Notes
Structure probing data (DMS and 2A3) for a 177-nucleotide construct. The RNA was probed in 150 mM KOAc, 10 mM MgCl2 and 150 mM bicine (pH 8.5) at 24 C. For DMS the reverse transcriptase was MarathonRT. The DMS profile rests on 9,151 reads. The data come from the RNA Mapping Database (RMDB), library OK2TRN. For 2A3, 2,556 sequencing reads were counted. For 2A3 the reverse transcriptase was SuperScript II with manganese.
RNA sequence: GGGAACGACUCGAGUAGAGUCGAAAAAACUCUGAUCCGGACGGUGUUGACUUCGUUAUCCCGGGUAACGACGACGCAAUCCGUGCUGUGACCCUGUACCUGGGCGCUGUUGCUGCAACCGUACGUGAUACAGGGCAUAUUUCGAUAUGCCCUGUAUAAAAGAAACAACAACAACAAC
Reactivity to DMS in 0.01 (KOAc 150mM, MgCl2 10mM, bicine 150mM(pH8.5), 24C), signal-to-noise 6, nucleotides 027 to 126: a070a060c060u000c030u000g000a130u010c060c010g000g000a010c220g010g010u000g020u010u000g000a120c070u000u000c010g010u010u000a120u010c010c040c050g010g010g000u000a030a030c060g010a060c090g020a090c090g010c050a060a070u010c080c070g020u000g030c040u010g000u010g000a130c080c040c040u000g000u000a040c030c030u000g010g010g010c300g010c080u010g010u010u010g010c030u000g000c040a040a110c040c020g010u000a030c070g010u010g010
Reactivity to 2A3 in 0.01 (KOAc 150mM, MgCl2 10mM, bicine 150mM(pH8.5), 24C), signal-to-noise 3, nucleotides 027 to 126: a000a000c060u070c020u030g030a020u050c000c010g000g030a000c010g010g010u000g030u070u090g060a180c040u020u020c020g100u090u070a090u140c050c030c000g050g010g000u030a060a030c030g060a020c030g000a000c020g020c020a010a060u020c060c050g050u070g070c020u100g010u110g030a180c040c000c000u060g010u030a040c010c020u010g000g030g020c040g020c080u110g060u230u050g020c050u010g030c020a090a140c010c010g020u060a020c020g050u080g020